Annotation:
Chemical mapping of a 177-nucleotide RNA with DMS. The RNA was probed in 150 mM KOAc, 10 mM MgCl2 and 150 mM bicine (pH 8.5) at 24 C. Source: RMDB library TTRINS, as collected in RNAgym. High DMS reactivity at an A or C suggests that its Watson-Crick edge is free.

RNA sequence: GGGAACGACUCGAGUAGAGUCGAAAAGAUAUGGACUGAUUGCCAUGUUGGCACUCUCGAUAAGCUCCCAUCGGAAACGAUGGUGAGCUUUUGACGAGAAACCAACAUGGCAAUCAGUCCUAAGUCAUCUGUGAUAGUAGUUCGCUACUAUCACAGAAAAAGAAACAACAACAACAAC
Reactivity to DMS in 0.01 (KOAc 150mM, MgCl2 10mM, bicine 150mM(pH8.5), 24C), signal-to-noise 2, nucleotides 027 to 126: g000a060u000a300u000g000g010a000c000u000g020a010u000u000g010c010c000a020u010g000u020u010g000g000c110a150c200u000c000u000c000g000a160u000a010a010g000c000u010c010c000c010a010u000c010g030g010a170a090a240c000g040a010u000g000g020u010g010a000g000c010u000u000u000u010g040a210c090g000a010g000a020a120a160c000c000a020a010c030a000u010g010g010c000a000a000u000c000a010g010u000c000c000u000a000a050g020u000c030a130